[RMDB]
An RNA of 207 nucleotides, treated with 2A3 and read out base by base. For 2A3, 921 sequencing reads were counted. The RNA was probed in 150 mM KOAc, 10 mM MgCl2 and 150 mM bicine (pH 8.5) at 24 C.
RNA sequence: GGGAACGACUCGAGUAGAGUCGAAAAGAAAGAAAGAAAGAACUCUGUAAAGUGAGGGAUUGCCUGGACCAGGUCGGCGGGCCUGCUCCAGUUUCGUUCGCUCUGCUCAACGGGCAGACCGCCACAAAAAACGCGUGGCUGUUCGCAGCCACGCGAACAGUACGUUGACGUUCGCGUCAACGUACUGAAAAGAAACAACAACAACAAC
Reactivity to 2A3 in 0.01 (KOAc 150mM, MgCl2 10mM, bicine 150mM(pH8.5), 24C), signal-to-noise 1, nucleotides 027 to 156: g060a020a070a020g070a070a040a040g070a070a070a000g010a000a020c050u010c040u080g110u300a070a140a070g110u100g030a020g020g020g020a060u030u170g070c010c030u010g000g000a000c000c010a000g000g000u020c060g020g000c000g000g010g010c000c020u000g010c000u010c010c000a000g050u000u040u020c010g010u000u020c050g020c060u030c000u000g010c000u040c110a030a090c100g000g000g020c020a020g030a080c020c050g000c010c020a050c050a030a180a010a020a000a000c000g000c020g000u000g000g000c000u000g000u000u100c190g000c070a000g010c010c000a000c000g000c010g000a000a000